[RMDB]
RNA sequence: GGGAACGACUCGAGUAGAGUCGAAAAAUUGUCCAUGUCAUCAGAUGAACACGCGGACGAGUAUUCGCGUUAUAUCGUAGACGGGGCGGCGGUUGCUGAAAUGAAAGGAAUCAUUGAACGCCAUCAGGUUAUUCGAUCAUUUCGAUGAUCGAAUAACAAAAGAAACAACAACAACAAC
Reactivity to DMS in 0.01 (KOAc 150mM, MgCl2 10mM, bicine 150mM(pH8.5), 24C), signal-to-noise 5, nucleotides 027 to 126: a050u010u020g030u000c010c010a090u040g010u000c020a140u020c180a170g000a030u010g010a100a110c300a020c020g010c000g000g000a020c080g020a160g010u020a170u000u000c000g000c010g000u000u000a100u050a010u000c030g010u010a210g000a020c010g010g000g010g010c040g010g030c100g000g020u000u010g020c060u000g010a080a030a060u020g030a030a080a140g000g010a120a100u000c030a050u000u000g000a110a090c120g010c010c030a060u010c080a090g020
Reactivity to 2A3 in 0.01 (KOAc 150mM, MgCl2 10mM, bicine 150mM(pH8.5), 24C), signal-to-noise 5, nucleotides 027 to 126: a010u180u110g020u000c010c010a060u090g020u020c040a120u010c050a070g000a040u030g010a040a020c010a000c050g020c000g010g020a030c070g020a090g090u100a180u050u010c000g000c000g030u010u030a130u020a010u130c020g020u030a050g030a020c010g020g000g000g000c000g010g020c020g010g000u080u060g040c070u040g050a050a060a070u050g010a090a020a070g170g070a040a030u060c040a030u050u050g040a060a010c030g010c010c000a040u070c040a030g070
Chemical mapping of a 177-nucleotide RNA with DMS and 2A3. Conditions: 150 mM KOAc, 10 mM MgCl2 and 150 mM bicine (pH 8.5), 24 C.